[RMDB]
RNA sequence: GGGAACGACUCGAGUAGAGUCGAAAAGCCAGAAAUUUGGGAACUGGCUGGGCAUGAUGGCUAAUACCUGUAAUCCCAGCACUUUGGGAGGCUUAGGUGGGUGGAUCACUUGAGGUCAGGAGUUCCAAGAGUCCUUCCCAUUCGUGGGAAGGACUCUAAAAGAAACAACAACAACAAC
Reactivity to DMS in 0.01 (KOAc 150mM, MgCl2 10mM, bicine 150mM(pH8.5), 24C), signal-to-noise 1, nucleotides 027 to 126: g030c010c010a070g020a090a080a180u000u100u000g000g000g010a210a080c010u000g000g020c000u070g000g000g000c040a060u000g000a150u000g000g040c040u000a090a080u090a230c060c000u000g020u010a300a070u000c030c010c000a000g010c080a000c160u000u010u000g000g000g010a110g000g020c120u020u010a010g000g160u000g000g020g000u000g000g000a060u000c110a150c020u000u010g000a080g020g000u010c110a020g000g020a160g010u010u000c000c010a080
Reactivity to 2A3 in 0.01 (KOAc 150mM, MgCl2 10mM, bicine 150mM(pH8.5), 24C), signal-to-noise 1, nucleotides 027 to 126: g010c000c000a000g090a000a160a020u160u140u050g110g010g000a090a110c030u040g030g000c000u020g000g040g030c040a040u110g030a040u100g110g010c060u100a120a000u050a280c000c000u000g030u070a080a040u020c000c000c000a020g050c000a080c130u030u090u030g020g020g030a010g030g030c000u020u010a000g000g000u050g040g080g010u070g090g000a070u190c000a000c000u030u040g060a040g010g070u060c040a000g040g000a120g000u000u060c040c000a080
Notes:
An RNA of 177 nucleotides, treated with DMS and 2A3 and read out base by base. Reactivities are given for positions 27 through 126. Conditions: 150 mM KOAc, 10 mM MgCl2 and 150 mM bicine (pH 8.5), 24 C. 2A3 adducts were read by reverse transcription with SuperScript II with manganese.